[RMDB]
Chemical mapping of a 207-nucleotide RNA with 2A3 and DMS.

RNA sequence: GGGAACGACUCGAGUAGAGUCGAAAAAUGAGCAGAAAGCAGUUAAGCUACAGGAGAGAUAUGAAAAGGGUAUUGCUGCAUAUCGUGCUAAGGGCAAAAGUGAAGCAGGAAAGAAGGGCUCAAAGAAGAACAAACCAGAAGAUGAGGAGGAGGAGGAAUAAUUAUUUUACUUCGGUAAAAUAAUUAUAAAAGAAACAACAACAACAAC
Reactivity to 2A3 in 0.01 (KOAc 150mM, MgCl2 10mM, bicine 150mM(pH8.5), 24C), signal-to-noise 1, nucleotides 027 to 156: a000u090g010a020g000c030a030g040a070a070a010g010c010a020g020u050u110a090a020g000c020u050a060c030a030g040g000a020g010a010g010a010u080a030u180g110a060a070a040a040g010g020g000u080a050u040u100g040c020u030g000c010a020u050a040u150c070g010u050g000c020u070a080a100g040g010g020c000a090a110a010a010g060u060g020a020a000g010c010a010g000g060a040a070a000g060a000a020g000g020g000c010u010c010a070a050a000g020a010a000g000a040a000c050a060a070a040c030c050a010g000a060a010g020a060u090g020a010g000g010a010g020g010a010g000g040a010g020g000a000
Reactivity to DMS in 0.01 (KOAc 150mM, MgCl2 10mM, bicine 150mM(pH8.5), 24C), signal-to-noise 1, nucleotides 027 to 156: a080u000g020a130g040c010a100g000a140a090a050g000c000a110g010u020u010a040a130g030c030u000a070c100a080g020g000a080g010a110g030a110u030a080u030g010a070a140a040a130g030g020g030u000a070u000u000g010c030u030g010c010a080u000a150u000c040g030u020g040c040u000a060a100g140g030g040c030a030a080a080a100g030u030g030a040a140g030c030a160g030g000a010a080a050g000a130a090g000g000g030c100u010c060a040a050a070g050a030a050g010a070a030c040a040a010a150c000c020a110g010a060a070g030a070u010g000a060g000g010a060g020g010a110g000g030a030g030g000a060
Conditions: 150 mM KOAc, 10 mM MgCl2 and 150 mM bicine (pH 8.5), 24 C. DMS adducts were read by reverse transcription with MarathonRT. The data come from the RNA Mapping Database (RMDB), library OK3TST.